This 177-nucleotide RNA was probed chemically with DMS.
For DMS, 965 sequencing reads were counted.
In probing experiments dimethyl sulfate is read out at A N1 and C N3, which are open when not base-paired.
The reactions ran in a buffer of 150 mM KOAc, 10 mM MgCl2 and 150 mM bicine (pH 8.5), at 24 C.
The data come from the RNA Mapping Database (RMDB), library OK2TST.
DMS adducts were read by reverse transcription with MarathonRT.
RNA sequence: GGGAACGACUCGAGUAGAGUCGAAAAUCGGUGCGUACCCACACGCCGACGUUGGCCGAUCCGCCCUUGUCGCCGCUGCGGGCGCCAGCGAUCAGGCCCAGCGGUACGCGCCGGGUCGGGCCAGCCGAACUUGCGCCGAAUUCGUUCGGCGCAAGUUAAAAGAAACAACAACAACAAC
Reactivity to DMS in 0.01 (KOAc 150mM, MgCl2 10mM, bicine 150mM(pH8.5), 24C), signal-to-noise 1, nucleotides 027 to 126: u020c010g010g010u000g000c000g020u000a030c020c000c030a140c280a180c300g000c000c010g000a040c020g000u010u000g050g030c050c030g000a030u000c010c030g000c030c050c070u000u000g010u020c110g000c030c040g000c120u000g000c060g000g000g010c050g020c000c000a010g010c010g000a090u000c050a110g060g000c000c050c120a080g030c090g010g000u000a010c020g030c010g030c010c000g010g000g000u000c030g000g000g020c020c030a110g020c080c020g000